[RMDB]
RNA sequence: GGGAACGACUCGAGUAGAGUCGAAAAGUGGAGAGUGAAAUUCAUAGGUGCGGCGCCAAUGUGGCGUAACGACCCGGUACUCCGCGCAGUCGCGCUGUAAACGUUCUGUGUUGGCGUUCAGGCCUCACCCUAAUCAUAUAUUCGUAUAUGAUUAGGGAAAAGAAACAACAACAACAAC
Reactivity to DMS in 0.01 (KOAc 150mM, MgCl2 10mM, bicine 150mM(pH8.5), 24C), signal-to-noise 8, nucleotides 027 to 126: g030u020g010g000a030g010a120g000u020g010a080a070a090u010u020c110a100u020a090g000g010u000g000c070g010g000c020g010c020c020a100a120u040g010u030g010g020c040g000u000a020a050c060g010a100c030c020c020g000g010u020a060c050u010c030c030g010c050g000c090a110g000u010c080g010c030g020c020u000g010u020a040a090a160c050g010u000u000c050u010g010u010g010u010u000g000g000c090g000u000u010c120a090g000g000c020c020u010c090a300
Reactivity to 2A3 in 0.01 (KOAc 150mM, MgCl2 10mM, bicine 150mM(pH8.5), 24C), signal-to-noise 5, nucleotides 027 to 126: g130u090g010g030a040g030a040g040u140g080a080a060a120u210u090c090a100u100a120g020g020u080g030c020g000g000c000g010c020c000a040a090u280g100u190g070g000c020g020u000a080a020c020g040a050c000c000c000g010g000u040a040c010u000c010c000g020c000g000c000a020g070u100c060g000c000g000c020u020g070u130a040a060a000c010g020u060u040c060u050g050u010g030u100u040g030g000c000g000u040u050c030a020g060g000c010c010u040c030a070

Source information
The record gives the reactivity of an RNA of 177 nucleotides to DMS and 2A3. For DMS, 31,006 sequencing reads were counted. For 2A3 the reverse transcriptase was SuperScript II with manganese. For DMS the reverse transcriptase was MarathonRT.